[RMDB]
RNA sequence: GGGAACGACUCGAGUAGAGUCGAAAAAUUUACGAGACUUAAUUCAAGGAGAGAUUAGGAAUGCAGAUACUUCAUGCUUUCACUGAACAGCCGUACAUCAGACCUGUCAACUCCAUUAAGUGACUGAGCGUGAGUAGCAAUUCGUUGCUACUCACGCAAAAGAAACAACAACAACAAC
Reactivity to 2A3 in 0.01 (KOAc 150mM, MgCl2 10mM, bicine 150mM(pH8.5), 24C), signal-to-noise 2, nucleotides 027 to 126: a030u120u060u060a060c130g020a000g030a120c030u030u100a060a120u200u030c100a060a010g000g070a010g010a050g000a060u130u240a180g040g000a080a000u040g030c060a000g050a120u080a060c050u040u100c070a040u090g080c010u060u120u000c100a110c140u010g000a010a010c050a040g060c000c050g080u120a030c040a040u120c010a020g020a060c010c000u030g010u000c010a030a130c040u020c030c010a050u010u020a000a000g000u040g070a070c040u030g030a050
Reactivity to DMS in 0.01 (KOAc 150mM, MgCl2 10mM, bicine 150mM(pH8.5), 24C), signal-to-noise 1, nucleotides 027 to 126: a000u000u050u050a000c090g040a050g000a070c070u000u000a080a060u000u000c220a040a060g080g000a080g000a300g010a020u000u110a030g000g000a020a150u000g090c110a040g010a230u010a090c080u000u000c040a230u000g030c110u000u000u000c020a200c060u070g000a080a050c050a050g000c000c110g000u000a000c170a010u020c000a000g000a300c000c000u000g000u000c050a050a110c020u000c020c030a150u000u000a000a000g000u000g060a170c020u000g000a140